[RMDB]
RNA sequence: GGGAACGACUCGAGUAGAGUCGAAAAGGAGUCGUUCGCGACUCCAAAAAAUCCUAAGUCGCAUAUCGACUAUCACACUACCCACCAACAUCGGAAACGAUGUUGAGGUGUGACGAAUCAUAUGCGAUAUGGAAAAAAACUCUGGUUCGCCAGAGAAGAAUGAAGAUAGGUUCGCCUAUCUUCAUUCAAAAGAAACAACAACAACAAC
Reactivity to DMS in 0.01 (KOAc 150mM, MgCl2 10mM, bicine 150mM(pH8.5), 24C), signal-to-noise 2, nucleotides 027 to 156: g010g010a020g000u000c000g020u010u010c240g070c000g010a030c000u000c000c000a000a000a030a080a040a080u010c010c010u010a090a210g000u000c000g010c010a040u000a010u000c120g060a020c050u000a080u000c020a030c000a040c000u020a020c030c010c020a300c170c010a010a000c000a000u000c000g000g010a190a160a210c010g000a010u000g020u010u000g000a040g030g010u020g000u000g000a040c050g010a100a040u020c000a040u000a000u000g000c000g010a010u010a160u000g000g000a000a000a050a080a070a110a070c000u000c000u000g010g030u000u010c280g020c010c000a020g010a040g010a040a130
Reactivity to 2A3 in 0.01 (KOAc 150mM, MgCl2 10mM, bicine 150mM(pH8.5), 24C), signal-to-noise 3, nucleotides 027 to 156: g010g000a000g000u010c010g000u030u060c040g000c000g000a010c010u000c020c000a030a030a030a020a010a020u030c030c000u040a130a030g010u010c000g000c010a000u010a000u040c140g020a020c030u030a020u050c010a000c000a010c000u120a090c040c090c040a040c020c000a020a000c000a000u000c000g030g020a090a050a050c020g010a000u000g000u000u000g000a020g010g000u000g000u000g020a030c060g110a070a140u010c000a000u010a000u010g000c000g000a000u010a030u030g000g050a000a030a020a020a030a070a110c000u010c010u000g010g060u070u080c220g050c050c000a000g000a000g000a000a020

The data come from the RNA Mapping Database (RMDB), library RNAMAK. Chemical mapping of a 207-nucleotide RNA with DMS and 2A3. Reactivities are given for positions 27 through 156. For DMS, 3,137 sequencing reads were counted.